The record gives the reactivity of an RNA of 177 nucleotides to 2A3 and DMS. 2A3 adducts were read by reverse transcription with SuperScript II with manganese. For DMS the reverse transcriptase was MarathonRT.

[RMDB]
RNA sequence: GGGAACGACUCGAGUAGAGUCGAAAAAGUCCGGCAUACGUGCCGGACAAGGCCCAAAACUGAAGUAAGGUAGAUUAGUAAGGUCAGCUGAUCCUACUAUUCUACUGUACUUCGAAAUUGGGCCCAAUACAGUUGUCCCAUUCGUGGGACAACUGUAAAAAGAAACAACAACAACAAC
Reactivity to 2A3 in 0.01 (KOAc 150mM, MgCl2 10mM, bicine 150mM(pH8.5), 24C), signal-to-noise 2, nucleotides 027 to 126: a000g000u000c000c000g010g000c000a020u050a070c160g080u020g000c000c000g020g000a000c000a000a000g000g000c000c040c000a000a000a000a030c060u080g000a020a000g060u130a070a030g060g000u000a000g000a020u030u000a000g050u020a110a110g000g000u010c070a060g150c270u300g090a040u090c000c000u000a000c010u000a000u000u000c000u010a000c000u000g000u000a000c000u000u000c000g010a000a060a000u010u000g020g000g000c000c020c010a040a030
Reactivity to DMS in 0.01 (KOAc 150mM, MgCl2 10mM, bicine 150mM(pH8.5), 24C), signal-to-noise 1, nucleotides 027 to 126: a060g000u000c000c000g000g060c000a030u000a050c300g010u000g020c000c000g000g000a000c000a040a010g000g000c000c010c040a000a010a080a140c200u010g020a000a000g000u000a000a300g000g000u000a000g000a020u010u010a000g010u010a000a020g000g000u000c000a220g040c300u030g020a000u000c000c000u000a010c000u000a000u000u000c000u000a000c000u010g010u020a020c000u000u000c000g000a000a120a190u000u000g080g000g000c000c000c140a040a020